Conditions: 150 mM KOAc, 10 mM MgCl2 and 150 mM bicine (pH 8.5), 24 C. An RNA of 170 nucleotides, treated with DMS and 2A3 and read out base by base. DMS adducts were read by reverse transcription with MarathonRT. For DMS, 31,707 sequencing reads were counted. The data come from the RNA Mapping Database (RMDB), library 15KLIB. 2A3 is a SHAPE reagent: it acylates the 2'-hydroxyl of flexible nucleotides of all four kinds. Values cover nucleotides 27 to 129.
RNA sequence: GGGAACGACUCGAGUAGAGUCGAAAACUAAGGACACUUUAGAUGAUAUCUUACAACAGGCUAAUAAGUCUGUUGGUAUUAUAUCUAUGCCUUUGGGAUAUGUGUCUCAUGGUUUAGACUUAAUGCACGGGCAAUUCGUUCGCGAAUUGCAAAAGAAACAACAACAACAAC
Reactivity to DMS in 0.01 (KOAc 150mM, MgCl2 10mM, bicine 150mM(pH8.5), 24C), signal-to-noise 5, nucleotides 027 to 129: c000u000a130a210g030g000a000c020a020c000u030u050u040a050g040a090u030g020a030u020a000u000c050u020u020a000c020a010a000c030a000g000g000c010u010a160a120u000a130a050g060u000c010u000g020u000u010g020g030u000a000u000u000a020u000a000u020c020u030a050u050g050c030c010u010u010u030g000g060g030a070u060a040u010g000u020g010u020c000u000c090a170u020g000g000u000u000u000a200g000a000c010u010u010a100a080u060g000c030a080c070g030g020
Reactivity to 2A3 in 0.01 (KOAc 150mM, MgCl2 10mM, bicine 150mM(pH8.5), 24C), signal-to-noise 9, nucleotides 027 to 129: c000u010a010a020g020g010a010c000a000c010u110u100u160a070g020a080u120g000a000u030a000u010c020u020u030a010c000a000a000c000a000g010g000c000u030a100a080u160a300a060g000u000c000u000g000u010u000g010g020u010a000u010u020a010u000a000u000c020u030a070u090g090c000c010u100u120u210g110g000g010a060u080a040u160g030u010g010u000c000u000c060a110u130g000g020u000u000u010a010g010a010c000u030u070a110a020u090g010c020a010c030g010g020